RNA sequence: GGGAACGACUCGAGUAGAGUCGAAAAGUACCUUGCCGAAGGCUUAAAGAGGCUCGUCCCACGCGUCACUGGGGCUAUCAGGAAGCUAUUUUCUGAUGGAUUCAAUGAAUUGAAGAAAAGGCUGCCAGUGAGUAAUACGAUUCGUCGUAUUACUCACAAAAGAAACAACAACAACAAC
Reactivity to DMS in 0.01 (KOAc 150mM, MgCl2 10mM, bicine 150mM(pH8.5), 24C), signal-to-noise 5, nucleotides 027 to 126: g010u000a080c030c030u000u000g010c010c030g000a110a100g020g010c050u010u000a050a090a120g010a140g000g020c040u000c070g000u000c020c010c030a150c140g020c090g020u010c020a030c030u010g010g000g000g000c020u000a020u010c020a020g010g010a020a030g000c280u010a060u000u000u000u000c010u000g000a040u010g000g010a090u000u000c010a020a070u000g000a060a070u000u010g010a090a060g010a080a090a110a080g000g000c040u000g020c010c060a140
Reactivity to 2A3 in 0.01 (KOAc 150mM, MgCl2 10mM, bicine 150mM(pH8.5), 24C), signal-to-noise 4, nucleotides 027 to 126: g020u050a080c010c000u020u080g040c010c010g140a140a040g040g020c030u060u120a110a080a030g110a050g050g000c010u010c030g050u020c010c010c010a020c030g070c050g060u050c010a010c030u020g000g020g020g010c000u010a020u020c010a000g020g010a030a000g040c080u180a180u260u010u000u000c010u010g010a030u020g040g030a040u070u000c010a030a040u100g100a050a120u120u070g040a050a050g040a040a070a000a020g030g010c020u030g080c010c000a020
Source: RMDB library OK2TST, as collected in RNAgym. Structure probing data (DMS and 2A3) for a 177-nucleotide construct. The RNA was probed in 150 mM KOAc, 10 mM MgCl2 and 150 mM bicine (pH 8.5) at 24 C. 2A3 adducts were read by reverse transcription with SuperScript II with manganese.